[RMDB]
RNA sequence: GGGAACGACUCGAGUAGAGUCGAAAACCCCUAAAUAUUCAAUGAGGAUUUGAUUCGACUCUUACCUUGGCGACAAGGUAAGAUAGAUGAAGAGAAUAUUUAGGGGUUGAAACGCAGUCCUUCCCGGCAGUAAUUGACAGUUCGCUGUCAAUUACUGAAAAGAAACAACAACAACAAC
Reactivity to DMS in 0.01 (KOAc 150mM, MgCl2 10mM, bicine 150mM(pH8.5), 24C), signal-to-noise 3, nucleotides 027 to 126: c000c000c000c000u000a000a010a000u010a000u000u000c000a200a190u010g010a150g020g020a190u000u000u020g000a140u010u000c000g000a180c210u010c000u000u000a010c000c000u000u000g000g000c300g010a200c010a000a010g010g010u000a010a000g000a010u000a040g020a000u000g000a250a040g000a220g000a000a000u000a000u000u000u000a010g010g010g010g020u000u000g000a030a030a050c050g000c120a030g000u010c010c130u000u000c000c010c000g000g030
Reactivity to 2A3 in 0.01 (KOAc 150mM, MgCl2 10mM, bicine 150mM(pH8.5), 24C), signal-to-noise 2, nucleotides 027 to 126: c010c000c000c000u020a000a000a000u010a010u030u030c030a060a180u190g070a220g270g060a120u080u100u190g020a030u020u040c000g030a020c110u020c010u010u000a000c000c010u010u010g030g000c030g000a060c020a000a000g000g000u000a000a010g000a000u000a000g000a000u010g010a040a010g060a010g000a010a000u000a000u000u010u010a000g010g000g000g000u000u000g000a010a000a010c060g000c060a000g010u030c020c000u000u000c010c050c000g070g060
Chemical mapping of a 177-nucleotide RNA with DMS and 2A3. The RNA was probed in 150 mM KOAc, 10 mM MgCl2 and 150 mM bicine (pH 8.5) at 24 C. The data come from the RNA Mapping Database (RMDB), library RFMREP. Reactivities are given for positions 27 through 126. 2A3 adducts were read by reverse transcription with SuperScript II with manganese.